Chemical mapping of a 177-nucleotide RNA with DMS and 2A3. The DMS profile rests on 16,368 reads. The reactions ran in a buffer of 150 mM KOAc, 10 mM MgCl2 and 150 mM bicine (pH 8.5), at 24 C. For 2A3 the reverse transcriptase was SuperScript II with manganese. The 2A3 profile rests on 8,576 reads.
[RMDB]
RNA sequence: GGGAACGACUCGAGUAGAGUCGAAAAGACUCCAUGCUGGCCUAUAACUACAAGGCCUUCACUCUGUACCCAGAAGAGUUUGGGCACAAGUCAGGAUUGCCAGAGAAAGAAUGGAAGGCAAAACUGAAUACUCUCUCUAGUUCGCUAGAGAGAGUAUAAAAGAAACAACAACAACAAC
Reactivity to DMS in 0.01 (KOAc 150mM, MgCl2 10mM, bicine 150mM(pH8.5), 24C), signal-to-noise 8, nucleotides 027 to 126: g000a150c070u020c010c020a040u020g020c030u000g000g000c000c140u000a080u030a100a110c120u020a080c120a100a210g000g010c000c000u000u010c050a030c010u000c010u000g000u010a120c090c070c120a140g020a130a040g000a030g010u000u010u010g000g000g000c030a080c070a060a170g010u000c060a010g000g000a190u000u000g000c000c000a020g000a170g010a170a110a110g010a140a060u020g000g010a120a070g000g000c050a030a020a060a170c040u000g000a110
Reactivity to 2A3 in 0.01 (KOAc 150mM, MgCl2 10mM, bicine 150mM(pH8.5), 24C), signal-to-noise 8, nucleotides 027 to 126: g050a020c030u030c020c010a020u060g010c020u020g000g010c010c020u160a120u060a300a120c090u160a100c080a120a050g050g000c000c000u000u000c000a010c000u010c010u020g040u120a110c010c030c030a050g160a150a020g030a080g000u030u060u040g020g010g000c050a040c020a190a080g050u050c040a020g000g050a100u060u050g000c000c000a010g030a010g050a050a190a010g180a040a020u130g040g080a070a130g040g000c000a020a020a050a030c020u030g010a000